[RMDB]
RNA sequence: GGGAACGACUCGAGUAGAGUCGAAAAGAUAUGGAGUGUUCAUGUCAGCGCAGAUACACUUGAAGAACAAUCUCGGAAACGAGAUUGUUCUUCAAGUGAGUAGCUGUACAUGAGACACUCCUAAGUCCUGUAGUGCUAUGUUCGCAUAGCACUACAGAAAAGAAACAACAACAACAAC
Reactivity to DMS in 0.01 (KOAc 150mM, MgCl2 10mM, bicine 150mM(pH8.5), 24C), signal-to-noise 2, nucleotides 027 to 126: g000a140u020a280u000g030g000a030g040u010g010u000u000c010a000u010g000u000c000a030g000c000g040c180a190g000a070u010a040c000a000c000u000u030g010a010a020g010a020a020c000a020a010u000c010u000c010g010g010a100a130a250c020g010a010g010a000u000u000g010u000u000c000u000u000c000a000a000g000u000g000a010g010u000a040g010c000u000g000u020a010c000a020u010g000a070g000a020c000a000c000u000c010c000u000a030a090g010u000c030
Record summary
This 177-nucleotide RNA was probed chemically with DMS. The data come from the RNA Mapping Database (RMDB), library TTRINS. DMS adducts were read by reverse transcription with MarathonRT. Values cover nucleotides 27 to 126. Conditions: 150 mM KOAc, 10 mM MgCl2 and 150 mM bicine (pH 8.5), 24 C. DMS (dimethyl sulfate) methylates the pairing face of unpaired adenines and cytosines.